The record gives the reactivity of an RNA of 177 nucleotides to DMS and 2A3. For DMS, 927 sequencing reads were counted. 2A3 adducts were read by reverse transcription with SuperScript II with manganese. The RNA was probed in 150 mM KOAc, 10 mM MgCl2 and 150 mM bicine (pH 8.5) at 24 C. High DMS reactivity at an A or C suggests that its Watson-Crick edge is free.
[RMDB]
RNA sequence: GGGAACGACUCGAGUAGAGUCGAAAAACAUGGCUGAGACGGCAACAUCUCCAUAAAGUUCUUGGCUAGUUCUGAAGGGCUUGCUAUUCUUCAGGUACUUCUUUGGAAGAAUACCUCUUGCUAUGUCCCAAGCGAAUAUCUUCGGAUAUUCGCUUGGAAAAGAAACAACAACAACAAC
Reactivity to DMS in 0.01 (KOAc 150mM, MgCl2 10mM, bicine 150mM(pH8.5), 24C), signal-to-noise 1, nucleotides 027 to 126: a080c050a020u000g000g000c010u010g040a050g040a070c190g080g000c060a040a090c120a110u000c010u000c000c030a040u000a060a080a050g000u000u000c010u000u010g000g000c070u000a070g000u000u000c010u000g000a110a120g010g010g000c020u000u010g000c070u000a100u000u020c170u000u000c050a070g000g000u000a030c050u010u000c100u010u000u000g020g020a080a060g000a300a050u000a060c020c000u000c030u000u000g020c030u000a060u000g000u010c070
Reactivity to 2A3 in 0.01 (KOAc 150mM, MgCl2 10mM, bicine 150mM(pH8.5), 24C), signal-to-noise 2, nucleotides 027 to 126: a000c020a010u050g020g000c010u060g010a000g020a070c130g060g040c010a020a070c000a090u010c010u000c030c000a020u040a050a120a020g040u050u010c030u060u030g020g000c020u020a030g000u000u040c050u140g160a160a130g040g010g020c010u060u050g040c020u060a090u260u110c060u130u090c050a040g070g000u020a010c010u060u080c010u180u000u070g060g030a130a020g020a030a080u130a300c010c000u000c030u020u030g010c010u020a020u060g020u000c000